The record gives the reactivity of an RNA of 177 nucleotides to 2A3. Values cover nucleotides 27 to 126. The reactions ran in a buffer of 150 mM KOAc, 10 mM MgCl2 and 150 mM bicine (pH 8.5), at 24 C. The data come from the RNA Mapping Database (RMDB), library OK1LIB. Values are in units of 0.01, from 0 to 300, in steps of 10. For 2A3 the reverse transcriptase was SuperScript II with manganese. For 2A3, 646 sequencing reads were counted.

[RMDB]
RNA sequence: GGGAACGACUCGAGUAGAGUCGAAAAUUCGGCCAAACGACCUGUGCCUAUAGCUACGUGUUCGGCGAUUUAUUGUGAGCAGGGCGAAUCCAAUUCGUUUGUCGCAUCUUUUGUCGCUUUGCACAUAACGUCCAGGCUCGUUCGCGAGCCUGGACGUAAAAGAAACAACAACAACAAC
Reactivity to 2A3 in 0.01 (KOAc 150mM, MgCl2 10mM, bicine 150mM(pH8.5), 24C), signal-to-noise 2, nucleotides 027 to 126: u040u030c050g010g000c060c000a070a040a110c000g110a170c020c030u050g030u110g030c010c000u100a090u020a100g030c020u010a000c050g020u020g000u040u010c040g030g000c020g030a010u000u050u120a260u000u220g050u080g080a000g100c050a050g040g040g000c000g000a030a040u140c090c090a090a060u010u070c000g150u060u030u040g050u000c010g000c010a060u110c010u010u160u060u140g000u000c000g000c000u050u060u070g030c040a010c000a080u030a090